RNA sequence: GGGAACGACUCGAGUAGAGUCGAAAAGAAGCAGUCCUUAUUGUGUGUGAUGUUUAGUCAUCGCACUGUACCUACGGGCUGCCAACGUAGGCCCAAUGUGCCGAGAGGCACUAGAAGUACGGCUUAUUAUGAGGCAUCGCCGUACCAAGGAUGCUGAAAAUAUAGCAGGAUUCGUCCUGCUAUAUUUAAAAGAAACAACAACAACAAC
Reactivity to DMS in 0.01 (KOAc 150mM, MgCl2 10mM, bicine 150mM(pH8.5), 24C), signal-to-noise 5, nucleotides 027 to 156: g010a150a070g020c030a030g010u010c010c010u020u000a100u000u000g020u000g020u010g030u000g020a020u000g010u000u000u000a210g020u020c000a030u000c010g010c010a010c010u000g020u000a060c090c070u000a100c090g000g010g000c030u010g000c000c030a050a050c080g000u000a070g020g000c000c020c040a100a150u000g020u000g000c010c000g000a260g000a300g020g020c010a010c010u000a060g000a110a080g020u000a040c020g010g020c010u010u000a130u000u000a100u010g020a190g010g010c050a070u000c110g020c000c010g020u000a020c020c050a060a130g020g000a140u000g010c000u010g000a180
Reactivity to 2A3 in 0.01 (KOAc 150mM, MgCl2 10mM, bicine 150mM(pH8.5), 24C), signal-to-noise 6, nucleotides 027 to 156: g110a050a010g010c010a000g070u040c010c020u060u070a180u210u200g100u020g000u000g020u010g040a010u000g110u050u200u170a260g140u210c000a000u010c000g000c000a000c020u020g070u090a090c020c020u020a020c020g000g000g000c000u000g000c000c000a040a000c030g070u080a030g070g000c000c000c000a010a060u110g000u000g000c010c010g030a030g020a040g030g000c000a000c020u020a030g060a130a000g040u070a010c020g000g000c010u050u010a030u110u060a110u270g090a080g080g010c030a040u050c050g050c100c020g000u010a030c000c010a020a040g070g010a020u080g010c020u070g020a060